The record gives the reactivity of an RNA of 207 nucleotides to DMS and 2A3. For 2A3, 1,584 sequencing reads were counted. 2A3 is a SHAPE reagent: it acylates the 2'-hydroxyl of flexible nucleotides of all four kinds. High DMS reactivity at an A or C suggests that its Watson-Crick edge is free.
RNA sequence: GGGAACGACUCGAGUAGAGUCGAAAAGGUAUGAUUAGGGUGAGACCUAGGAACCGUAGGGGUAUUCUCAUAGGAAGCUUUUGCAGUGACGCCCAUGUAAGUGGGAUAUAACAACAGAACUCGUAUGUGUGGCACAGAGAGUUCGCUCUCUGUGCAACCAACGGAUUAACUUCGGUUAAUCCGUUGGAAAAGAAACAACAACAACAAC
Reactivity to DMS in 0.01 (KOAc 150mM, MgCl2 10mM, bicine 150mM(pH8.5), 24C), signal-to-noise 1, nucleotides 027 to 156: g030g040u010a070u000g030a160u000u000a050g000g000g000u010g020a190g000a090c020c010u000a080g030g000a060a070c080c040g000u010a070g000g000g030g000u010a090u000u000c050u000c020a090u000a080g030g010a080a050g050c090u000u030u000u000g030c030a120g020u000g020a120c140g010c010c000c010a050u000g010u000a130a140g030u000g000g020g010a040u000a040u000a130a100c010a060a080c020a100g020a040a080c020u010c040g000u000a060u000g020u000g020u010g010g010c000a000c000a000g010a100g010a050g060u000u000c300g000c020u000c000u000c020u000g030u000g020c000a000a040
Reactivity to 2A3 in 0.01 (KOAc 150mM, MgCl2 10mM, bicine 150mM(pH8.5), 24C), signal-to-noise 3, nucleotides 027 to 156: g050g010u110a070u210g060a070u090u100a040g010g000g010u030g070a130g040a050c010c030u030a030g010g100a060a040c070c030g030u080a040g030g020g010g010u050a080u130u060c080u010c030a040u060a020g090g000a060a020g020c020u030u050u080u090g000c060a040g010u010g020a020c050g040c000c000c000a010u060g090u120a120a130g020u020g010g000g000a010u040a000u020a060a020c040a000a010c010a040g080a080a050c020u020c070g050u090a110u100g070u020g030u050g020g010c000a000c000a000g000a000g000a000g000u060u030c090g030c010u000c000u020c000u000g000u000g000c000a000a010

Values cover nucleotides 27 to 156.